RNA sequence: GGGAACGACUCGAGUAGAGUCGAAAAGCCAGGUUCGACUAAGACGGAAGCGUUUUCCAUCCACCUUGCGCCGUAUGCAUACCUGAAAUGCAGGAAGGUUCGCAACCUUCAGAUCUCGCAGGGUGACGCAUUGUCUAAAGGCAACUCGGAUCGCGUAGCUUCCCAUUCAAUUCGUUGAAUGGGAAGCAAAAGAAACAACAACAACAAC
Reactivity to DMS in 0.01 (KOAc 150mM, MgCl2 10mM, bicine 150mM(pH8.5), 24C), signal-to-noise 3, nucleotides 027 to 156: g040c030c090a070g010g020u000u010c000g020a050c020u010a080a100g020a050c020g010g000a130a100g010c050g020u000u000u000u010c040c030a150u010c060c040a030c010c030u010u000g020c020g010c060c070g020u020a100u000g000c000a060u000a110c110c050u020g000a100a180a050u010g000c020a120g010g020a040a020g000g010u000u000c300g000c200a130a160c000c000u000u000c010a200g020a110u000c040u000c030g030c030a070g000g000g030u000g000a050c060g000c030a070u000u000g000u000c050u010a040a080a120g020g020c040a050a100c030u010c020g020g000a070u000c040g010c040g000u010a230
Reactivity to 2A3 in 0.01 (KOAc 150mM, MgCl2 10mM, bicine 150mM(pH8.5), 24C), signal-to-noise 8, nucleotides 027 to 156: g070c030c030a070g040g090u010u020c010g000a010c020u070a150a050g110a040c010g020g040a040a010g030c020g010u030u050u070u060c020c020a060u050c020c000a010c000c000u010u010g000c000g020c010c080g080u110a060u080g000c010a010u070a160c020c070u110g120a170a190a010u040g000c000a010g070g010a000a010g010g010u030u060c050g010c080a080a020c000c000u000u010c000a030g020a180u080c040u030c070g000c000a000g000g000g000u010g000a000c030g010c020a060u020u130g010u010c020u100a150a060a110g030g010c020a040a060c040u040c080g070g020a060u090c060g000c050g070u040a030
Record summary
Structure probing data (DMS and 2A3) for a 207-nucleotide construct. Values cover nucleotides 27 to 156. For 2A3 the reverse transcriptase was SuperScript II with manganese. It was measured as part of the RMDB library OK3TST. The reactions ran in a buffer of 150 mM KOAc, 10 mM MgCl2 and 150 mM bicine (pH 8.5), at 24 C.